Conditions: 150 mM KOAc, 10 mM MgCl2 and 150 mM bicine (pH 8.5), 24 C.
The record gives the reactivity of an RNA of 177 nucleotides to DMS and 2A3.
DMS adducts were read by reverse transcription with MarathonRT.
For 2A3 the reverse transcriptase was SuperScript II with manganese.
DMS (dimethyl sulfate) methylates the pairing face of unpaired adenines and cytosines.

[RMDB]
RNA sequence: GGGAACGACUCGAGUAGAGUCGAAAACGACGACGCUUGCCCAAUCGAUGCCGCGCACGCCCGGGACGAUGUGCCGCAGCGGCAGCACGAGCCAGUUGGUCGCCUGCAGCACGGCCUGCGUGACGGACGCCAGUCAAAAUUUCGAUUUUGACUGGCGAAAAGAAACAACAACAACAAC
Reactivity to DMS in 0.01 (KOAc 150mM, MgCl2 10mM, bicine 150mM(pH8.5), 24C), signal-to-noise 2, nucleotides 027 to 126: c050g030a100c160g010a120c130g030c040u000u000g010c000c010c020a130a090u000c100g020a120u000g010c020c030g020c040g020c040a040c110g000c010c230c110g000g000g000a070c060g010a110u010g050u000g010c000c040g000c010a060g010c010g010g030c010a060g000c040a050c130g000a100g060c080c110a090g010u000u000g020g010u010c000g020c110c010u000g040c000a070g020c000a050c040g010g040c010c010u000g000c040g000u000g000a070c000g000g000a200
Reactivity to 2A3 in 0.01 (KOAc 150mM, MgCl2 10mM, bicine 150mM(pH8.5), 24C), signal-to-noise 1, nucleotides 027 to 126: c020g080a040c050g030a040c070g000c070u090u100g080c010c020c000a020a040u110c060g050a070u140g080c010c000g060c050g030c050a020c020g030c000c060c020g020g020g020a030c080g120a140u190g000u040g030c000c000g000c010a000g010c000g000g000c000a000g000c030a030c080g020a040g070c060c010a050g070u080u100g110g010u070c010g020c070c020u000g040c000a000g040c000a010c020g030g040c040c000u000g010c010g020u020g030a020c030g040g000a000